[RMDB]
RNA sequence: GGGAACGACUCGAGUAGAGUCGAAAAAGUAGGUUCGCCUACUGGAUAACCGUAGGGUUGAUGAAUGAUGACCAGUUGGGAAACCUGUAUUCGAAAGAGUACAGGGCAACUGCAAGUUCUACCAACCCUAAACGGGGGUGUGCCUUUUCGAAGGCAAUCUGUCACUUGGAUUCGUCCAAGUGACAGAAAAAGAAACAACAACAACAAC
Reactivity to DMS in 0.01 (KOAc 150mM, MgCl2 10mM, bicine 150mM(pH8.5), 24C), signal-to-noise 1, nucleotides 027 to 156: a060g010u000a000g010g040u000u000c300g050c000c030u000a020c000u010g000g000a220u010a050a050c010c020g000u010a030g010g010g000u010u000g030a030u000g000a040a050u000g000a140u000g000a230c300c010a020g010u010u000g000g010g020a220a100a040c020c020u000g050u000a000u000u000c000g000a180a090a300g010a060g000u000a000c010a040g030g000g020c000a010a000c010u000g000c010a100a230g010u000u000c020u010a010c020c000a020a020c010c000c020u010a010a090a090c070g000g000g000g040g000u010g000u000g010c010c000u000u000u000u000c200g030a050a000g040g020c000a080a140
Reactivity to 2A3 in 0.01 (KOAc 150mM, MgCl2 10mM, bicine 150mM(pH8.5), 24C), signal-to-noise 2, nucleotides 027 to 156: a000g080u040a010g060g020u040u070c300g070c020c000u000a010c000u000g020g020a120u110a140a070c000c060g020u020a070g000g000g000u010u020g010a030u000g010a030a030u040g130a130u060g020a040c040c000a000g020u030u000g050g000g150a220a170a040c000c000u030g000u000a010u000u010c010g040a030a100a030g000a010g000u000a000c000a010g000g020g030c000a000a000c000u000g000c020a200a090g000u000u020c000u030a060c020c010a010a000c010c000c040u010a020a010a020c040g000g000g010g040g010u140g020u020g050c000c000u070u120u040u090c170g170a020a020g000g000c000a010a050